[RMDB]
RNA sequence: GGGAACGACUCGAGUAGAGUCGAAAAGCCAAUCCUGAGUGUCAAUCAGCCAUUAAGCCAUUAAAAGGAAAGGUUCCUGCAGGAUCAGAUGUAAUCUCAGAAUAUGUAAAAGCCUGUGAUGGAAUGGAUACUCUAAGGGUUUCGACCCUUAGAGUAUAAAAGAAACAACAACAACAAC
Reactivity to 2A3 in 0.01 (KOAc 150mM, MgCl2 10mM, bicine 150mM(pH8.5), 24C), signal-to-noise 7, nucleotides 027 to 126: g070c010c020a010a070u020c000c000u030g070a050g030u080g030u060c030a060a080u030c030a040g040c010c000a040u110u100a080a030g030c000c010a040u060u160a100a120a060a040g100g050a090a070a070g090g020u060u030c000c000u030g010c020a020g000g030a060u110c030a040g040a070u090g060u190a110a130u030c050u010c050a050g090a160a100u180a080u190g130u140a070a130a050a050g040c000c010u020g020u060g030a070u090g010g000a020a000u050g040g020
Reactivity to DMS in 0.01 (KOAc 150mM, MgCl2 10mM, bicine 150mM(pH8.5), 24C), signal-to-noise 6, nucleotides 027 to 126: g000c020c040a080a170u020c040c010u000g020a100g010u010g010u010c060a050a100u010c050a060g010c010c030a050u010u020a120a120g020c030c020a060u010u010a060a030a140a060g010g000a040a080a150g000g000u010u010c010c020u000g030c050a030g000g010a080u010c060a070g010a060u020g000u010a090a070u010c050u010c060a070g010a100a090u030a090u020g000u010a090a090a140a140g000c030c010u000g000u000g010a060u010g010g010a060a030u010g000g010